[RMDB]
RNA sequence: GGGAACGACUCGAGUAGAGUCGAAAAGACAUGCGUUUUGACCAAGGAACAGGCGUCACGACCUUUGAACAGGGCAAGGAACUUCCACCAGACUUCAAGUUCGGCCUCGUCGUGGAUAUUGUCGAUGGCAAGAAAGCUCGGCGACACUGCAUGCCGAGAUUUCGAUCGCCUUCGGGCGAUCGAAAUCAAAAGAAACAACAACAACAAC
Reactivity to 2A3 in 0.01 (KOAc 150mM, MgCl2 10mM, bicine 150mM(pH8.5), 24C), signal-to-noise 1, nucleotides 027 to 156: g040a010c050a050u170g010c050g040u000u090u110u230g090a110c000c020a120a090g010g030a060a050c000a140g050g000c000g070u050c000a000c050g080a080c030c000u160u160u140g080a190a040c110a100g050g000g000c020a030a060g090g020a010a020c010u110u010c020c020a070c060c010a070g100a230c100u090u120c090a010a010g010u010u010c000g000g030c010c010u050c030g040u000c000g000u010g020g060a050u040a150u090u160g040u050c040g010a050u080g010g030c080a010a000g040a210a080a000g070c030u010c050g000g000c030g010a000c040a010c050u130g010c000a050u140g010c000c000g040a020